[RMDB]
RNA sequence: GGGAACGACUCGAGUAGAGUCGAAAAUAGCCCAGACUUUUGAGAGAAUUAGUCACCUCUCAGCCCCUCCACCUUGGGGUGCCCUAUCCGAACACUGCUGUUUCGGUAGAAAGGCUAAGCACGUCGCCAAUCGAAGUCUGUUCGCAGACUUCGAUUGAAAAGAAACAACAACAACAAC
Reactivity to DMS in 0.01 (KOAc 150mM, MgCl2 10mM, bicine 150mM(pH8.5), 24C), signal-to-noise 1, nucleotides 027 to 126: u000a180g000c020c000c000a150g000a060c170u000u000u000u030g010a010g000a010g000a080a150u010u000a140g010u000c180a140c210c000u010c000u000c000a080g010c020c000c000c000u000c260c060a130c170c160u010u050g000g010g010g050u000g000c030c010c020u010a140u020c010c010g010a020a020c030a070c190u000g070c210u010g000u000u010u000c000g000g000u000a000g000a030a080a170g000g010c040u000a000a040g000c030a050c180g010u000c070g000c060
Description:
Chemical mapping of a 177-nucleotide RNA with DMS. The RNA was probed in 150 mM KOAc, 10 mM MgCl2 and 150 mM bicine (pH 8.5) at 24 C.